This 207-nucleotide RNA was probed chemically with DMS and 2A3. For 2A3 the reverse transcriptase was SuperScript II with manganese. For DMS, 2,121 sequencing reads were counted. The RNA was probed in 150 mM KOAc, 10 mM MgCl2 and 150 mM bicine (pH 8.5) at 24 C. The 2A3 profile rests on 2,041 reads.

RNA sequence: GGGAACGACUCGAGUAGAGUCGAAAAAUUUUCAAAGCAAACAUAAACAAGCACAGAUGAAUGUAGUGCAAAUCACCACUAUAAACAGCUUUCAGCUGGCUGCACAAACGGUGAAUCUGUGAGUUGAUUUUGUAAUUAAAAAAAUGUAGAAAUGAUACGAUGAUUAAUGAUUCGUCAUUAAUCAUCGAAAAGAAACAACAACAACAAC
Reactivity to DMS in 0.01 (KOAc 150mM, MgCl2 10mM, bicine 150mM(pH8.5), 24C), signal-to-noise 2, nucleotides 027 to 156: a200u010u000u000u000c020a090a230a300g020c030a020a060a090c110a060u010a040a100a100c000a070a160g020c010a050c030a000g010a080u000g000a130a100u020g000u020a070g030u000g040c040a110a060a110u000c100a050c090c030a130c060u010a050u000a050a100a110c000a050g000c000u010u000u000c100a140g030c140u000g000g080c090u000g050c050a140c030a050a100a090c140g020g040u000g000a070a050u000c000u000g030u010g000a150g030u000u000g010a160u030u000u000u000g000u030a080a070u050u030a020a000a070a020a070a100a100u010g000u000a130g000a080a100a060u000g010a150u000a170
Reactivity to 2A3 in 0.01 (KOAc 150mM, MgCl2 10mM, bicine 150mM(pH8.5), 24C), signal-to-noise 3, nucleotides 027 to 156: a000u090u070u060u060c030a050a000a060g050c040a070a080a050c040a090u130a090a080a030c070a070a020g050c000a000c010a000g020a000u020g030a110a050u080g000u040a030g030u040g010c010a070a070a060u120c040a030c070c000a020c030u090a030u080a230a110a040c000a000g000c000u110u300u210c050a000g000c020u050g010g070c020u030g000c000a020c010a120a130a010c060g090g000u050g040a010a030u000c000u010g000u010g020a070g050u000u030g030a090u010u020u020u040g040u050a080a160u110u210a060a040a020a060a050a020a030u130g030u100a050g060a090a190a120u100g050a040u120a210